An RNA of 207 nucleotides, treated with 2A3 and read out base by base.
For 2A3, 489 sequencing reads were counted.
The RNA was probed in 150 mM KOAc, 10 mM MgCl2 and 150 mM bicine (pH 8.5) at 24 C.
Values cover nucleotides 27 to 156.
Reactivities are rounded to 0.1 and cut off at 0 and 3.
RNA sequence: GGGAACGACUCGAGUAGAGUCGAAAACACAGUAAUAUAUUGGGAUAUUUACUUCAUCUUAGAUUUUAAGCAUCUAGAGGUCGGAGACUGUGACGCUUUCUUAUCACAGAGCCAACAACCACACCACACCCAAUUAAACAACACAUAAAUGCAUGCAAUUAUGGCAUGGGUUCGCCCAUGCCAUAAUAAAAGAAACAACAACAACAAC
Reactivity to 2A3 in 0.01 (KOAc 150mM, MgCl2 10mM, bicine 150mM(pH8.5), 24C), signal-to-noise 1, nucleotides 027 to 156: c090a000c020a060g100u090a060a290u060a010u100a060u140u100g010g010g020a010u040a040u050u170u040a080c020u020u020c020a120u060c000u060u050a010g020a110u060u100u040u140a110a090g010c020a000u000c020u020a000g000a060g180g060u030c060g060g010a050g040a090c000u020g020u000g010a020c040g000c000u110u230u130c060u040u180a020u030c010a020c010a030g020a050g060c020c000a000a060c010a050a020c090c020a010c030a020c070c000a020c000a010c000c000c000a020a000u060u100a090a030a000c060a020a030c040a010c000a140u120a150a090a050u120g030c000a010u040g070c000a120